[RMDB]
RNA sequence: GGGAACGACUCGAGUAGAGUCGAAAAUAUAGAACAGAAUCGCCGUGCAGUACGUUGUGGACGAAGCGGCUAAAACUUACACAACUCGCCCAAAGCACCCUGCCCUUCGGGUCGCUGAGGGUUAACUUAAUAGAAACGGCUACGCAUGUAGUACCGAGUAGUUAAUAAACUUCGGUUUAUUAACUACAAAAGAAACAACAACAACAAC
Reactivity to DMS in 0.01 (KOAc 150mM, MgCl2 10mM, bicine 150mM(pH8.5), 24C), signal-to-noise 1, nucleotides 027 to 156: u000a180u010a100g020a210a210c060a120g000a110a060u010c090g000c040c040g070u000g030c100a230g030u000a010c060g000u000u010g030u000g040g000a170c070g010a110a190g030c050g020g000c060u000a000a020a060a060c070u010u000a090c020a070c020a030a000c030u000c060g000c030c020c010a070a300a130g000c010a060c000c000c000u000g000c160c040c060u010u010c090g020g000g010u000c100g000c030u000g010a300g010g040g010u000u000a010a000c060u000u000a040a100u000a130g010a080a090a040c030g000g000c000u010a040c040g040c070a080u020g000u020a070g010u010a150c010c000g000a300
Reactivity to 2A3 in 0.01 (KOAc 150mM, MgCl2 10mM, bicine 150mM(pH8.5), 24C), signal-to-noise 3, nucleotides 027 to 156: u180a000u030a010g080a090a040c080a090g130a180a050u190c080g000c020c010g060u110g040c200a040g030u010a000c020g010u040u020g000u000g010g000a000c020g010a020a000g020c010g030g010c000u010a000a010a000a070c020u040u190a000c020a020c000a040a030c010u030c040g020c000c000c010a000a010a000g030c000a000c000c020c020u050g040c020c020c000u110u140c030g000g020g000u060c100g000c010u000g000a010g000g010g000u000u000a010a000c000u010u110a010a010u040a060g070a060a100a000c000g000g000c000u010a000c030g070c150a050u230g010u040a030g050u020a090c040c010g000a020
Description
The record gives the reactivity of an RNA of 207 nucleotides to DMS and 2A3. The reactions ran in a buffer of 150 mM KOAc, 10 mM MgCl2 and 150 mM bicine (pH 8.5), at 24 C. 2A3 adducts were read by reverse transcription with SuperScript II with manganese.